[RMDB]
RNA sequence: GGGAACGACUCGAGUAGAGUCGAAAAUGGGAUGCCCUUCCCGAUUCCGUCCAUCCCCACCCCCGGGUGUCCCCCCAGGAAUGGCGGGACCCCACUCGACAGGGUCCGCGUACCAUCCUUUCUUACCACCGGGAUACGUUCGCGUAUCCCAAAAGAAACAACAACAACAAC
Reactivity to DMS in 0.01 (KOAc 150mM, MgCl2 10mM, bicine 150mM(pH8.5), 24C), signal-to-noise 4, nucleotides 027 to 129: u010g030g000g010a000u050g020c050c050c050u020u020c000c020c030g020a130u050u020c030c050g000u050c000c000a060u040c040c010c020c060a250c030c020c030c030c050g010g010g040u000g040u030c010c040c030c040c020c040a050g030g030a010a010u000g010g030c000g000g000g000a010c000c000c000c100a130c000u060c160g040a070c270a200g000g010g050u040c010c020g050c030g000u030a120c000c000a050u050c020c020u010u000u010c080u000u050a130c130c100a080c270c110
Reactivity to 2A3 in 0.01 (KOAc 150mM, MgCl2 10mM, bicine 150mM(pH8.5), 24C), signal-to-noise 6, nucleotides 027 to 129: u090g000g000g010a000u030g000c000c000c040u020u000c010c000c010g010a090u120u020c020c010g070u030c030c010a120u060c010c000c000c000a030c000c000c000c010c010g010g000g010u060g020u020c000c010c000c000c000c000a010g020g020a120a060u010g030g000c000g010g000g000a000c010c000c000c000a040c020u150c070g090a060c040a070g030g000g000u020c020c000g170c020g020u040a060c000c010a010u010c000c000u050u110u030c040u060u100a170c040c040a040c000c060
Source: RMDB library 15KLIB, as collected in RNAgym. An RNA of 170 nucleotides, treated with DMS and 2A3 and read out base by base. For DMS the reverse transcriptase was MarathonRT. The RNA was probed in 150 mM KOAc, 10 mM MgCl2 and 150 mM bicine (pH 8.5) at 24 C.